An RNA of 177 nucleotides, treated with DMS and 2A3 and read out base by base. DMS (dimethyl sulfate) methylates the pairing face of unpaired adenines and cytosines. The 2A3 profile rests on 1,063 reads. For DMS, 1,262 sequencing reads were counted. For 2A3 the reverse transcriptase was SuperScript II with manganese.
RNA sequence: GGGAACGACUCGAGUAGAGUCGAAAAUGAUGGGCGAUGCGGUUGAACCUCGUCGUGCCUUUAUCGAAGAGAAUGCGUUGCGAGCAGCAAAUAUCGAUAUCUAAUCAGGUAACUUAUUGAUCAGAUAACCCGCUUAGGUAUUCGUACCUAAGCGGGUAAAAGAAACAACAACAACAAC
Reactivity to DMS in 0.01 (KOAc 150mM, MgCl2 10mM, bicine 150mM(pH8.5), 24C), signal-to-noise 2, nucleotides 027 to 126: u020g020a030u000g010g010g020c000g000a010u000g010c150g020g010u000u010g000a190a300c030c010u010c010g020u000c000g030u000g010c020c010u000u000u000a030u000c070g000a090a140g000a070g010a110a110u000g010c080g000u000u000g010c070g020a080g030c040a100g000c090a030a030a090u010a110u000c060g020a120u000a010u000c010u010a050a040u000c020a030g010g020u000a060a090c210u000u000a070u000u000g000a050u010c040a050g010a070u000a040
Reactivity to 2A3 in 0.01 (KOAc 150mM, MgCl2 10mM, bicine 150mM(pH8.5), 24C), signal-to-noise 1, nucleotides 027 to 126: u120g000a020u040g000g010g000c010g000a000u020g020c000g050g040u060u240g200a110a180c000c000u000c000g000u000c000g000u080g280c000c000u000u030u010a080u030c090g020a080a000g050a030g030a120a110u070g050c080g060u060u090g000c090g030a080g000c010a010g040c030a020a070a090u130a030u070c020g020a010u000a040u110c040u050a050a000u040c010a000g010g050u030a070a070c010u080u090a040u130u130g040a070u000c000a010g050a180u060a020